RNA sequence: GGGAACGACUCGAGUAGAGUCGAAAAACGGCUAGGUACGCCUAGCCGAAAUGCCUGGGAUGAAGCCUGUGUUGGUAGGGACAUCUGAAAGUGCUGAUGAAUGCCAGUGGCUCUGAUGGUGGUGUAAGAUUUGACGAAUAUUCGUAUUCGUCAAAUCAAAAGAAACAACAACAACAAC
Reactivity to 2A3 in 0.01 (KOAc 150mM, MgCl2 10mM, bicine 150mM(pH8.5), 24C), signal-to-noise 6, nucleotides 027 to 126: a000c010g010g010c010u000a000g010g010u040a040c210g090c020c000u000a000g000c000c000g010a010a010a000u100g010c010c000u020g030g040g000a070u110g030a060a060g070c000c030u050g020u030g040u130u070g040g030u030a060g040g020g000a020c000a030u040c030u020g060a090a110a020g060u080g040c040u050g010a070u080g030a180a060u090g040c020c010a040g030u050g060g010c020u000c020u040g050a060u050g010g070u030g020g010u040g010u030a080a050
Reactivity to DMS in 0.01 (KOAc 150mM, MgCl2 10mM, bicine 150mM(pH8.5), 24C), signal-to-noise 7, nucleotides 027 to 126: a170c000g010g000c000u010a010g000g010u010a100c270g020c000c010u000a020g010c010c000g010a010a020a040u010g010c010c010u010g010g000g010a070u010g010a120a100g020c030c020u000g010u000g010u010u000g000g010u020a080g010g000g000a120c040a030u010c030u000g010a070a060a080g010u000g010c040u010g000a090u010g010a110a090u020g000c030c020a050g010u010g010g010c030u000c030u010g000a080u000g000g010u000g000g010u010g000u010a070a110
Source information
Structure probing data (2A3 and DMS) for a 177-nucleotide construct. The data come from the RNA Mapping Database (RMDB), libraries RFM100 and RFMREP. The reactions ran in a buffer of 150 mM KOAc, 10 mM MgCl2 and 150 mM bicine (pH 8.5), at 24 C. Reactivities are given for positions 27 through 126.